[RMDB]
RNA sequence: GGGAACGACUCGAGUAGAGUCGAAAAUGACUGAUUCCGCGGUGAGCAUCAGCGUGAUCGCGACCACAACGGAUAGAUAACGAACCACUCGACGCAUGGCGUCCACCCUCCCGAGAUGGUGCGAUCGGCCCUGCUGUAAGUUCGCUUACAGCAGGGCAAAAGAAACAACAACAACAAC
Reactivity to 2A3 in 0.01 (KOAc 150mM, MgCl2 10mM, bicine 150mM(pH8.5), 24C), signal-to-noise 2, nucleotides 027 to 126: u130g040a000c060u040g000a050u080u040c020c020g000c010g060g000u040g050a060g070c080a030u060c060a020g180c070g240u120g080a070u120c050g010c010g060a040c040c000a000c050a060a010c000g050g000a000u050a060g080a060u150a230a020c000g020a000a010c010c000a010c060u020c010g000a000c000g050c050a220u220g100g000c000g030u060c040c010a280c000c000c000u030c020c020c000g000a010g020a060u020g000g010u000g030c030g030a090u040c000g020
Reactivity to DMS in 0.01 (KOAc 150mM, MgCl2 10mM, bicine 150mM(pH8.5), 24C), signal-to-noise 2, nucleotides 027 to 126: u000g020a150c060u000g050a130u000u000c030c020g000c300g010g030u010g010a150g050c080a090u000c030a060g010c160g010u000g000a040u000c080g020c020g000a010c020c000a080c070a010a140c060g000g000a140u000a110g010a030u010a010a200c110g000a070a030c050c020a030c030u000c010g030a070c080g030c010a160u010g030g000c000g010u000c010c050a140c040c010c040u000c000c000c020g010a120g000a040u010g010g000u000g010c020g020a040u000c080g000